[RMDB]
This 207-nucleotide RNA was probed chemically with DMS and 2A3. High 2A3 reactivity points to a flexible backbone, as in loops and unpaired stretches. The RNA was probed in 150 mM KOAc, 10 mM MgCl2 and 150 mM bicine (pH 8.5) at 24 C.
RNA sequence: GGGAACGACUCGAGUAGAGUCGAAAAGUGCAUAUCGAGCAUGAACAUAACUCGUUAAAUACUGUUUAAAACAAAUAGUUGCAAAUAAUUACAACUAUAGUUUGGCAGCUUAAUGCCAACCUGUUAUCAUUUGUGGCCUACAACAUUUGAUAACGGUACUAUCUUUUCUGUUCGCAGAAAAGAUAGUAAAAGAAACAACAACAACAAC
Reactivity to DMS in 0.01 (KOAc 150mM, MgCl2 10mM, bicine 150mM(pH8.5), 24C), signal-to-noise 1, nucleotides 027 to 156: g020u000g000c050a120u000a060u010c050g030a030g100c020a280u000g010a050a150c080a100u010a090a030c010u000c010g020u010u000a040a090a090u000a010c000u010g030u000u000u000a060a000a040a020c020a090a100a140u010a020g010u010u010g000c020a020a070a130u000a100a130u000u000a030c000a000a010c000u000a010u000a130g020u000u010u010g000g020c010a030g030c030u000u000a060a090u000g010c070c050a030a080c090c000u000g020u000u020a000u000c000a020u000u000u000g010u010g000g020c160c110u000a070c020a060a040c000a000u000u000u010g000a030u010a010a000c000g000g040u000
Reactivity to 2A3 in 0.01 (KOAc 150mM, MgCl2 10mM, bicine 150mM(pH8.5), 24C), signal-to-noise 9, nucleotides 027 to 156: g110u110g040c060a060u090a050u190c020g000a000g000c030a060u090g080a080a020c030a050u130a060a030c000u010c030g120u060u050a030a060a030u070a070c060u020g040u030u070u090a080a130a030a030c050a020a190a060u010a010g010u000u010g030c040a070a100a100u160a130a130u300u170a070c000a010a000c000u010a010u020a080g020u020u030u020g000g000c000a010g000c030u120u230a090a020u040g000c010c000a010a020c020c000u040g000u010u000a000u000c000a000u010u000u000g020u020g040g090c050c060u130a090c060a130a000c000a020u000u000u010g000a000u000a000a000c010g010g000u000